[RMDB]
RNA sequence: GGGAACGACUCGAGUAGAGUCGAAAAGAGACUGAGCCUUGUCUUGAUCUGCAAAUGAGGAGGGGGUGAAGUCCAGAGAGACAGCAUGACGUGCCUAAGAGCACACAGUUGAUCUGUGACAGGGAUACACGAUUUUCUUACAAAAGUGAGACUAUAACAUUUAGCGAUCAUUCGUGAUCGCUAAAUGAAAAGAAACAACAACAACAAC
Reactivity to 2A3 in 0.01 (KOAc 150mM, MgCl2 10mM, bicine 150mM(pH8.5), 24C), signal-to-noise 4, nucleotides 027 to 156: g060a000g010a010c040u070g030a030g050c010c020u060u060g060u070c030u050u100g040a080u030c020u090g040c040a090a100a140u210g020a050g040g020a060g010g020g000g000g010u060g060a040a000g000u000c000c000a020g010a000g000a010g010a050c000a020g050c040a090u130g080a080c080g000u000g000c000c000u120a220a060g040a040g000c010a020c000a010c020a020g030u050u050g060a070u020c010u010g060u070g040a030c020a030g030g000g020a020u060a090c060a020c070g020a010u050u090u040u020c040u070u050a070c060a030a190a010a010g060u050g040a030g010a010c020u080a070u100a260a030
Reactivity to DMS in 0.01 (KOAc 150mM, MgCl2 10mM, bicine 150mM(pH8.5), 24C), signal-to-noise 2, nucleotides 027 to 156: g010a110g010a020c010u010g000a140g000c050c060u010u000g000u010c050u000u000g000a100u000c020u000g000c110a050a050a130u000g000a070g000g000a130g000g010g000g020g020u020g030a060a130g010u020c010c010a060g000a110g030a300g020a060c050a060g060c100a100u010g010a170c070g020u020g030c010c010u000a090a200g000a100g010c010a080c030a060c080a020g020u000u000g010a220u000c030u030g010u020g000a060c020a100g010g010g010a170u000a110c070a040c100g020a160u000u000u010u000c060u040u000a170c050a040a060a100a130g010u000g000a110g010a070c120u000a120u000a050a170